About this RNA
Chemical mapping of a 207-nucleotide RNA with 2A3. 2A3 adducts were read by reverse transcription with SuperScript II with manganese. It was measured as part of the RMDB library OK3TST. Values cover nucleotides 27 to 156.
RNA sequence: GGGAACGACUCGAGUAGAGUCGAAAACACUAGAUGCACGUGGUGGUGCCAUGAAUAUCUACCAAGGUGCAACUGGUACACAGGACAACCUCAAAGGCACAGCCUUCGGUGCGUUCCAAGCAAUCGUUGAGUAUGUCGAUUGGUUCAGCCACAAAUCUCAAACGACAGGUUUCGACCUGUCGUUUGAAAAAGAAACAACAACAACAAC
Reactivity to 2A3 in 0.01 (KOAc 150mM, MgCl2 10mM, bicine 150mM(pH8.5), 24C), signal-to-noise 1, nucleotides 027 to 156: c060a000c000u020a020g020a070u020g020c010a030c080g060u000g000g000u010g000g050u030g060c060c010a070u180g080a100a070u160a030u080c000u040a000c000c000a000a080g190g000u000g000c000a000a040c000u030g020g000u090a020c120a000c000a120g000g140a020c000a000a030c060c000u120c130a040a020a020g020g000c060a070c100a300g020c000c000u000u050c020g000g000u050g000c010g000u150u000c000c000a020a000g000c010a000a050u010c070g050u020u140g040a070g080u190a110u170g030u020c050g060a090u010u030g010g000u100u060c060a080g120c070c040a080c050a030a080a050u170c110